RNA sequence: GGGAACGACUCGAGUAGAGUCGAAAACUAUUCGAAUGGAUCCAUCUAAGGUUGAUGCGAAGCACUUUGUAUGUAGGUGACCCUUUCAAUCCCCCAGACAGUGAUAAUCCAUUAGACUUAGAUGAAGGAUCGAUAAUGACUUCGGUCAUUAUCGAUCAAAAGAAACAACAACAACAAC
Reactivity to DMS in 0.01 (KOAc 150mM, MgCl2 10mM, bicine 150mM(pH8.5), 24C), signal-to-noise 2, nucleotides 027 to 126: c040u000a040u000u030c020g000a070a170u070g010g030a070u010c010c000a010u000c020u000a040a050g000g020u000u000g010a050u000g010c110g000a050a090g010c010a030c040u000u010u020g010u000a060u010g080u030a030g010g000u030g000a110c100c050c040u030u000u030c090a160a180u020c010c000c000c280c030a040g000a090c010a090g010u040g010a020u030a070a080u030c010c000a040u000u000a000g000a090c000u000u000a010g000a050u000g010a110a080g000
Reactivity to 2A3 in 0.01 (KOAc 150mM, MgCl2 10mM, bicine 150mM(pH8.5), 24C), signal-to-noise 5, nucleotides 027 to 126: c010u020a100u150u160c090g120a090a090u220g110g030a050u020c010c020a010u020c010u030a020a060g080g040u070u050g050a010u010g060c110g070a100a040g090c020a010c030u080u170u180g070u140a080u070g150u080a060g000g060u130g080a080c020c010c000u040u090u030c010a060a100u040c000c030c010c000c000a030g010a090c020a010g020u000g050a060u060a260a040u000c000c010a000u000u020a010g000a040c000u010u010a010g010a050u050g060a060a080g100